[RMDB]
RNA sequence: GGGAACGACUCGAGUAGAGUCGAAAACGCGAGGCUGCUGAGAAGGCAAAGAUUGAGCUUUCUUCCUCCCAGUCUGCAAACGUCAACCUGCCAUACAUCACCGUUGAUGCUGAUAAGAACCCACUGUUCUUGGAUGAGACGCUUUCUCGCACCGAGAGUGCGAAAAUACUUUCGAGUAUUUUCGCACAAAAGAAACAACAACAACAAC
Reactivity to 2A3 in 0.01 (KOAc 150mM, MgCl2 10mM, bicine 150mM(pH8.5), 24C), signal-to-noise 5, nucleotides 027 to 156: c100g020c040g010a030g000g010c050u020g010c070u110g040a010g010a090a020g060g010c060a060a090a050g110a110u120u270g080a070g040c050u050u030u020c000u090u060c010c020u020c000c000c000a000g020u010c020u050g020c030a040a090a030c030g030u000c010a030a020c010c020u070g030c050c030a070u120a160c030a050u100c010a030c140c030g040u040u050g020a030u030g000c060u010g030a050u040a130a000g010a020a030c030c070c040a090c170u120g060u070u020c010u010u040g040g010a030u060g020a020g010a040c030g010c010u030u100u020c000u000c010g010c020a040c020c010g040a040g020a000
Reactivity to DMS in 0.01 (KOAc 150mM, MgCl2 10mM, bicine 150mM(pH8.5), 24C), signal-to-noise 3, nucleotides 027 to 156: c040g030c040g020a150g000g010c050u000g030c000u000g010a120g030a070a060g050g010c130a100a070a070g010a150u010u020g010a140g030c100u000u000u000c050u000u000c020c060u010c020c050c000a150g020u000c050u010g010c060a060a080a070c060g010u000c050a080a130c030c010u000g080c030c030a150u010a060c060a100u000c040a100c030c170g040u000u000g010a060u000g020c030u000g010a160u020a040a060g010a030a070c020c040c080a100c120u000g030u000u000c000u020u000g010g030a080u000g010a170g010a100c070g000c060u030u000u000c010u010c010g030c040a140c030c020g000a170g010a190

An RNA of 207 nucleotides, treated with 2A3 and DMS and read out base by base. 2A3 adducts were read by reverse transcription with SuperScript II with manganese. Values cover nucleotides 27 to 156. The reactions ran in a buffer of 150 mM KOAc, 10 mM MgCl2 and 150 mM bicine (pH 8.5), at 24 C. It was measured as part of the RMDB library OK3TST. The 2A3 profile rests on 4,043 reads.